[RMDB]
RNA sequence: GGGAACGACUCGAGUAGAGUCGAAAAGAAAGAGCCUGAAUACGGAGAACCGUAACGCAUGACCGAAUAUUCAGCCCAGUUCACGACGUAAGUCGUGCGCCCGAGUCUAUUUCUGGGCGCUGGGGUCACGUACAUGCGUCAGGCAGGAGGUAGAGAACCUAAAUUACGUCUUCGGACGUAAUUUAGGAAAAGAAACAACAACAACAAC
Reactivity to DMS in 0.01 (KOAc 150mM, MgCl2 10mM, bicine 150mM(pH8.5), 24C), signal-to-noise 2, nucleotides 027 to 156: g000a110a010a100g000a160g010c010c030u000g050a090a250u000a060c010g000g000a150g020a120a080c030c000g020u000a120a300c000g000c020a020u000g010a160c050c030g050a090a120u000a160u000u030c060a110g050c000c000c000a050g000u000u000c000a030c000g030a030c030g020u010a080a290g030u000c010g060u000g070c100g010c000c000c030g010a070g010u000c140u000a170u010u010u010c030u030g020g020g000c010g000c010u010g010g000g020g010u010c060a080c060g010u000a120c020a020u000g000c020g050u010c040a110g020g050c030a110g000g010a080g050g000u000a130g000a130g000a120a250
Reactivity to 2A3 in 0.01 (KOAc 150mM, MgCl2 10mM, bicine 150mM(pH8.5), 24C), signal-to-noise 3, nucleotides 027 to 156: g060a010a080a010g100a020g000c000c000u030g040a090a060u070a050c030g040g030a110g100a270a190c020c010g000u010a000a000c000g000c000a000u030g010a030c020c080g050a120a070u180a120u300u120c060a100g060c000c000c000a020g030u140u140c010a010c000g000a000c010g020u090a120a130g010u000c000g020u010g000c010g000c020c000c000g030a010g040u060c100u250a230u050u280u000c100u150g010g010g000c000g000c000u010g000g000g020g000u070c050a010c040g020u080a060c000a000u000g000c000g000u000c000a010g000g020c010a000g050g030a040g020g080u170a060g020a010g050a080a000